RNA sequence: GGGAACGACUCGAGUAGAGUCGAAAACGUUCAAUGUCGUAGUCUCGAAGUGCGCUCAUUCCGGUUUCCUUAUUUGGAUUUGCGAGUGGUGCGCUGUUGCGCUUUGAUUUCUGCAAUCCACUCAGGAUGAAUAAUCAUGUUUCGACAUGAUUAUUCAAAAAGAAACAACAACAACAAC
Reactivity to 2A3 in 0.01 (KOAc 150mM, MgCl2 10mM, bicine 150mM(pH8.5), 24C), signal-to-noise 9, nucleotides 027 to 126: c030g030u080u050c060a100a090u130g070u110c020g020u030a050g040u010c010u000c060g060a120a030g040u040g050c020g010c020u030c050a050u090u020c050c000g030g000u030u030u030c020c000u140u120a250u140u180u130g070g010a080u050u040u220g090c050g010a020g020u030g020g070u060g020c010g000c030u030g100u090u170g000c020g000c000u080u070u110g110a140u060u170u060c040u080g000c010a010a020u000c010c000a020c030u050c050a040g080g020a070
Reactivity to DMS in 0.01 (KOAc 150mM, MgCl2 10mM, bicine 150mM(pH8.5), 24C), signal-to-noise 7, nucleotides 027 to 126: c110g010u010u020c080a080a060u020g010u020c040g000u000a030g010u000c010u000c040g010a080a080g010u010g010c040g030c030u020c050a100u010u010c040c030g010g010u000u010u000c010c010u000u030a120u010u010u020g000g000a050u020u020u020g010c070g010a030g030u000g000g000u010g010c120g010c020u010g010u020u020g010c020g000c040u010u010u020g000a080u010u020u020c040u020g010c070a070a080u000c000c000a060c170u020c120a100g000g010a190
An RNA of 177 nucleotides, treated with 2A3 and DMS and read out base by base. The 2A3 profile rests on 21,473 reads. It was measured as part of the RMDB library OK1LIB. The RNA was probed in 150 mM KOAc, 10 mM MgCl2 and 150 mM bicine (pH 8.5) at 24 C.